[RMDB]
RNA sequence: GGGAACGACUCGAGUAGAGUCGAAAAGGAUGCAGGGCUAUCUCGUAAACGCUCUCUGCAAAAUACAACUGCCAAUAACAAGCAGUCGUCCUUUGUUCUCGCUGCCUAAGCGAGCGCACUAACAGGACCGUCGACCCGGUGAUGCUCUCUAUCCGGUACAGUAAAUAAGCUUCGGCUUAUUUACUGUAAAAGAAACAACAACAACAAC
Reactivity to 2A3 in 0.01 (KOAc 150mM, MgCl2 10mM, bicine 150mM(pH8.5), 24C), signal-to-noise 7, nucleotides 027 to 156: g080g020a030u060g010c040a010g020g000g000c020u070a070u120c070u060c150g160u220a100a080a070c090g020c020u020c000u000c020u050g000c010a030a030a050a040u190a050c090a070a030c020u010g010c010c030a130a130u180a190a120c090a130a040g000c010a000g030u030c030g010u010c030c000u050u040u050g000u030u010c000u000c010g010c010u040g030c030c160u140a070a000g010c000g010a000g010c030g020c010a050c010u100a170a020c030a110g010g000a020c030c010g060u070c040g040a070c020c010c010g010g020u040g010a050u090g020c010u010c000u000c010u070a030u070c010c000g020g000u000
Reactivity to DMS in 0.01 (KOAc 150mM, MgCl2 10mM, bicine 150mM(pH8.5), 24C), signal-to-noise 3, nucleotides 027 to 156: g030g030a120u010g060c040a070g010g000g020c040u000a140u010c040u020c130g020u010a140a120a100c100g000c050u000c010u000c030u010g030c000a050a090a050a150u000a070c030a030a050c010u000g000c020c030a050a150u000a120a160c160a130a110g020c000a030g010u000c010g010u000c060c040u000u010u000g010u000u000c000u000c000g030c010u000g010c140c110u010a100a110g010c040g010a010g010c100g050c000a050c080u000a080a060c050a050g000g020a020c010c070g000u000c050g000a180c070c030c010g020g030u000g020a070u000g000c020u000c040u000c040u010a190u010c030c010g000g010u000